Chemical mapping of a 177-nucleotide RNA with 2A3 and DMS.
For DMS the reverse transcriptase was MarathonRT.
The 2A3 profile rests on 3,412 reads.

RNA sequence: GGGAACGACUCGAGUAGAGUCGAAAAUUGUGGUCAAGACCUUGGCGUAGUAUCCAAGGUUGUCAAGGUUCCUAUUGACUUAACAAUGAUUGAGUUUAUGUAAUGGUGUAAGGAUGGACAGGGGAAAAUGAUAUUAUUUAUUCGUAAAUAAUAUCAUAAAAGAAACAACAACAACAAC
Reactivity to 2A3 in 0.01 (KOAc 150mM, MgCl2 10mM, bicine 150mM(pH8.5), 24C), signal-to-noise 3, nucleotides 027 to 126: u020u000g000u030g040g020u070c030a010a040g020a000c000c000u010u000g000g000c020g060u080a020g050u070a110u100c050c000a010a010g000g000u000u050g000u010c000a020a020g040g010u030u080c010c000u030a100u020u050g010a020c000u050u080a070a010c020a070a120u100g030a170u060u140g050a050g090u050u060u090a080u100g100u060a080a140u110g050g010u030g020u050a060a060g030g010a010u040g020g000a010c040a020g020g000g000g000a030a080a000
Reactivity to DMS in 0.01 (KOAc 150mM, MgCl2 10mM, bicine 150mM(pH8.5), 24C), signal-to-noise 9, nucleotides 027 to 126: u000u000g030u000g010g000u000c040a050a080g000a020c000c000u000u000g000g010c190g010u000a140g010u010a140u010c040c050a030a030g000g010u000u000g010u000c090a060a060g010g010u000u000c060c070u000a130u000u000g010a010c010u000u000a090a040c030a040a050u000g010a160u000u000g000a090g000u000u000u010a040u010g010u010a060a090u000g010g010u000g010u000a060a080g010g000a070u000g000g000a040c060a070g000g010g000g010a070a050a070